[RMDB]
RNA sequence: GGGAACGACUCGAGUAGAGUCGAAAAGGAGCUUGAUUCGUCAAGCUCCAAAAGUUACAGACCCGAUUGCUAGGGUAAACAAGAAGCUAUGCACCGAGGCAAAAAGGAAUGGAUUCGUCCAUUCCAACAUUGUUGACCUGUUCGCAGGUCAACAAUGAAAAGAAACAACAACAACAAC
Reactivity to 2A3 in 0.01 (KOAc 150mM, MgCl2 10mM, bicine 150mM(pH8.5), 24C), signal-to-noise 1, nucleotides 027 to 126: g030g000a000g000c000u000u000g000a000u060u040c030g030u020c040a000a000g000c010u010c000c000a000a010a010a000g010u000u090a060c050a080g100a200c000c010c040g050a100u040u090g060c000u050a040g000g000g070u100a100a100a000c060a000a040g170a070a010g060c100u080a030u140g020c020a030c060c050g060a040g020g020c000a000a040a000a050a000g000g000a000a010u000g000g000a020u040u040c170g040u000c050c000a000u020u020c000c010a000a000
Reactivity to DMS in 0.01 (KOAc 150mM, MgCl2 10mM, bicine 150mM(pH8.5), 24C), signal-to-noise 2, nucleotides 027 to 126: g010g010a030g020c010u010u000g010a050u010u000c220g010u000c000a000a010g000c000u000c000c000a010a010a010a150g010u000u000a130c240a110g000a140c010c020c010g010a170u000u010g010c030u010a140g000g000g020u000a020a080a060c080a030a080g020a120a130g000c020u000a040u000g000c020a030c010c000g000a180g010g000c050a040a030a050a120a090g000g000a010a010u000g000g020a020u010u010c210g000u000c000c000a000u000u000c000c000a070a090